An RNA of 207 nucleotides, treated with 2A3 and DMS and read out base by base. The data come from the RNA Mapping Database (RMDB), library OK3TST. The DMS profile rests on 1,980 reads.
[RMDB]
RNA sequence: GGGAACGACUCGAGUAGAGUCGAAAAACACCUGUAAUCCCAGCUACUUGAGUGGCUUGAGGCUGCAGUGAGCUGAGAUCAUGCCAUUGCACUCUAGCCUGGGUAACAGAGUGAGAGACUGUCUCAAAAAAAAAAAAAGAAAGAAAGGAAUGAAAGACCACCUCAUAUUAUUCGUAAUAUGAGGUGGAAAAGAAACAACAACAACAAC
Reactivity to 2A3 in 0.01 (KOAc 150mM, MgCl2 10mM, bicine 150mM(pH8.5), 24C), signal-to-noise 2, nucleotides 027 to 156: a020c020a030c010c010u020g020u050a090a090u110c000c020c000a020g000c060u090a040c040u150u140g050a040g040u070g060g040c000u020u020g040a020g110g010c120u100g010c020a020g030u030g070a080g020c020u020g050a030g020a180u150c060a050u200g000c000c010a020u010u030g010c010a000c010u000c000u010a000g000c000c010u020g000g000g000u000a000a010c000a010g050a010g110u040g020a100g020a010g020a040c040u030g010u000c000u010c000a020a020a010a000a010a010a000a010a000a000a040a010a020g100a030a080a020g050a040a040a040g040g040a010a070u170g030a150a070a000g030a020
Reactivity to DMS in 0.01 (KOAc 150mM, MgCl2 10mM, bicine 150mM(pH8.5), 24C), signal-to-noise 1, nucleotides 027 to 156: a090c040a060c040c040u010g000u000a150a210u000c000c000c000a170g000c020u000a020c020u000u000g000a110g020u000g010g020c040u000u000g030a130g000g030c040u000g030c010a110g000u010g010a230g020c030u000g010a120g000a130u000c050a130u000g030c000c040a090u020u000g030c020a050c030u000c020u000a070g010c070c000u010g060g020g000u000a110a030c010a020g000a130g000u000g000a080g000a090g000a170c060u000g010u000c000u000c000a000a000a000a000a020a020a020a000a110a030a000a120a060g000a090a050a020g000a040a050a090g010g010a040a050u000g020a090a060a120g030a210